[RMDB]
RNA sequence: GGGAACGACUCGAGUAGAGUCGAAAAGACACAGAAGAUAUACGCGCGGGUAUAUCAAUGCAAGCGCCCCGAGACGAAAAGAAUAAAAGAAAUAAGAAUACAGAACUAAGACAUAAAGACAAGACAAGUGGGUGUAAUAGUUCGCUAUUAUACCCACAAAAGAAACAACAACAACAAC
Reactivity to DMS in 0.01 (KOAc 150mM, MgCl2 10mM, bicine 150mM(pH8.5), 24C), signal-to-noise 4, nucleotides 027 to 126: g000a300c060a080c010a040g010a190a090g000a040u000a020u020a010c020g010c110g000c150g000g020g010u000a000u000a010u000c010a100a220u020g020c080a110a130g030c040g000c010c010c000c060g000a100g000a080c050g010a050a100a090a080g000a060a060u030a050a040a080a070g000a080a040a040u020a050a050g000a080a020u030a060c060a070g000a030a030c050u000a040a050g020a030c080a050u030a060a040a060g000a070c150a060a070g020a080c170a060a070
Reactivity to 2A3 in 0.01 (KOAc 150mM, MgCl2 10mM, bicine 150mM(pH8.5), 24C), signal-to-noise 3, nucleotides 027 to 126: g040a000c070a000c000a090g090a150a030g010a060u050a010u010a030c010g080c020g020c070g160g040g000u000a010u000a000u010c000a040a000u060g030c040a030a110g020c020g050c050c000c000c000g020a020g000a030c070g060a060a050a050a130g060a060a040u200a090a080a070a010g140a010a130a010u010a080a010g020a050a050u020a120c000a010g080a060a000c030u080a080a000g050a040c010a030u140a080a070a000g090a040c050a100a040g000a040c020a090a210

The record gives the reactivity of an RNA of 177 nucleotides to DMS and 2A3.
The RNA was probed in 150 mM KOAc, 10 mM MgCl2 and 150 mM bicine (pH 8.5) at 24 C.
DMS adducts were read by reverse transcription with MarathonRT.